[RMDB]
RNA sequence: GGGAACGACUCGAGUAGAGUCGAAAAGCCGAAGAGUUCGCUCUUCGGCGACGAAUUUGGCGUAGAUGAGAGUCUUCAGUACUAGCCAUCCCAGAUGUACAAAUAAGCAUUGCUUCGGCAAUGCUAAUGUAGGCAAUAGAUUCGUCUAUUGCCUACAAAAAGAAACAACAACAACAAC
Reactivity to DMS in 0.01 (KOAc 150mM, MgCl2 10mM, bicine 150mM(pH8.5), 24C), signal-to-noise 7, nucleotides 027 to 126: g010c010c000g010a000a000g000a020g010u000u010c210g010c000u000c000u000u000c010g000g000c000g000a020c150g010a130a160u010u000u010g010g010c010g000u000a030g010a030u000g000a210g000a230g000u010c040u000u000c150a140g010u010a020c010u000a060g000c010c010a050u000c000c000c010a210g000a040u000g010u010a030c040a090a080a090u010a100a040g000c000a010u000u000g000c000u000u020c180g020g000c000a000a000u010g000c000u000a010a020
Reactivity to 2A3 in 0.01 (KOAc 150mM, MgCl2 10mM, bicine 150mM(pH8.5), 24C), signal-to-noise 5, nucleotides 027 to 126: g000c000c000g000a010a000g010a000g050u130u140c160g040c140u000c000u010u000c000g000g090c010g000a000c010g130a070a190u110u060u140g000g000c030g000u030a010g010a050u030g020a020g020a030g100u020c000u060u050c100a040g010u010a020c010u020a010g010c010c010a050u010c000c000c000a020g020a090u120g020u030a020c030a030a130a080u160a170a020g000c000a000u000u000g000c000u030u050c180g060g010c000a010a000u000g000c000u010a010a010